[RMDB]
RNA sequence: GGGAACGACUCGAGUAGAGUCGAAAAUCGGACGAAUUGAUGCACACUCGCUGCACCAUGUUCCAGCGCGACAGCCGCUGCGUCGAACGCGGAUGCGGCCGCUCCGACCACACCCACGCUCAAGCCGAGGCCUGGACGGAUUCGUCCGUCCAGGCCUAAAAGAAACAACAACAACAAC
Reactivity to 2A3 in 0.01 (KOAc 150mM, MgCl2 10mM, bicine 150mM(pH8.5), 24C), signal-to-noise 1, nucleotides 027 to 126: u190c000g000g030a010c080g070a020a070u170u130g050a030u180g040c010a000c020a000c080u090c130g010c040u100g000c040a020c000c030a010u120g070u000u070c000c000a040g000c030g000c050g090a030c090a070g080c040c040g000c040u010g000c000g130u150c090g120a060a060c020g000c020g040g030a020u080g000c040g030g000c000c000g020c000u000c010c000g070a060c000c000a040c000a000c010c020c000a020c110g000c010u080c090a000a090g000c050c020g040